[RMDB]
RNA sequence: GGGAACGACUCGAGUAGAGUCGAAAAAUGCUGGCCCCGUGUACAGUAUACAGCGCCAUCCUACGAUCAGUGACGUCUACCUGACAUGUGGGGAUGUGCAGUUCAAAAUAUGGCGUGUGGGAACUGAGUUUUAAAUGACCUUCGGGUCAUUUAAAACAAAAGAAACAACAACAACAAC
Reactivity to DMS in 0.01 (KOAc 150mM, MgCl2 10mM, bicine 150mM(pH8.5), 24C), signal-to-noise 2, nucleotides 027 to 126: a040u010g010c050u000g000g000c010c010c030c110g010u000g010u000a100c010a050g000u010a260u000a080c080a070g000c020g000c000c010a010u000c030c020u010a110c220g010a100u000c000a040g030u000g000a070c070g010u000c090u010a100c090c010u000g000a090c130a090u010g000u010g020g000g000g000a040u000g010u010g000c040a050g000u000u000c060a060a080a150a120u000a050u000g000g000c020g030u000g000u000g010g000g000a080a050c030u000g020a190
Reactivity to 2A3 in 0.01 (KOAc 150mM, MgCl2 10mM, bicine 150mM(pH8.5), 24C), signal-to-noise 2, nucleotides 027 to 126: a000u140g000c020u030g130g000c000c080c030c060g010u000g000u130a180c020a000g000u000a080u030a150c040a050g020c000g010c000c000a020u030c000c000u030a020c020g020a100u010c020a020g040u030g240a050c020g050u030c050u160a300c010c000u120g170a110c050a150u220g110u120g080g030g010g000a010u010g040u080g010c000a000g000u020u020c030a040a070a070a060u050a030u020g040g000c000g050u250g120u050g140g010g010a000a000c010u040g020a020

Source: RMDB library OK2TST, as collected in RNAgym. Structure probing data (DMS and 2A3) for a 177-nucleotide construct. For DMS, 2,055 sequencing reads were counted.